[RMDB]
Structure probing data (DMS and 2A3) for a 207-nucleotide construct.
Values are in units of 0.01, from 0 to 300, in steps of 10.
In probing experiments dimethyl sulfate is read out at A N1 and C N3, which are open when not base-paired.

RNA sequence: GGGAACGACUCGAGUAGAGUCGAAAAACCAAGUCUGGGGGCCGAUGAGGGUUGGCUCAAAGUAGGGUUUUGACUUGAAAACUCAAGCUGUGACCCGAAAACGAUGGAGGUAAAUGAGAAUCCUCCUAAAACUAUGGACACUUCGGUGUCCAUAGAACAUAUGGUUUUCGUUCGCGAAAACCAUAUGAAAAGAAACAACAACAACAAC
Reactivity to DMS in 0.01 (KOAc 150mM, MgCl2 10mM, bicine 150mM(pH8.5), 24C), signal-to-noise 2, nucleotides 027 to 156: a150c040c020a030a270g010u000c040u010g010g020g030g030g010c050c050g020a100u000g010a170g020g030g040u000u000g040g000c060u000c040a060a040a050g020u000a200g000g000g010u000u000u000u030g010a040c000u000u000g000a050a100a100a130c260u000c010a000a020g000c030u000g000u020g000a110c020c000c000g000a030a100a050a150c050g010a080u000g010g010a020g060g040u010a040a090a170u020g010a200g000a170a250u000c010c000u000c000c020u010a020a080a110a120c010u020a010u000g010g010a020c020a030c020u000u000c300g000g010u000g010u000c000c000a000u000a010g010a040a250
Reactivity to 2A3 in 0.01 (KOAc 150mM, MgCl2 10mM, bicine 150mM(pH8.5), 24C), signal-to-noise 3, nucleotides 027 to 156: a000c010c020a000a000g090u020c040u120g080g000g010g030g000c010c020g030a020u060g070a120g090g150g020u050u060g010g000c020u030c040a090a030a000g030u040a020g030g020g040u030u020u090u070g080a080c000u000u010g030a060a040a110a070c080u030c010a010a000g000c040u040g040u080g090a060c000c020c010g020a020a020a010a000c070g070a070u130g000g000a000g000g000u070a090a200a120u210g010a070g020a070a060u040c000c000u000c020c010u010a050a040a010a010c000u000a000u000g000g000a010c010a000c010u030u080c230g080g000u000g010u000c000c000a000u000a000g000a000a000
Source: RMDB library M2RFPK, as collected in RNAgym. For DMS, 2,880 sequencing reads were counted. The 2A3 profile rests on 1,650 reads. The reactions ran in a buffer of 150 mM KOAc, 10 mM MgCl2 and 150 mM bicine (pH 8.5), at 24 C.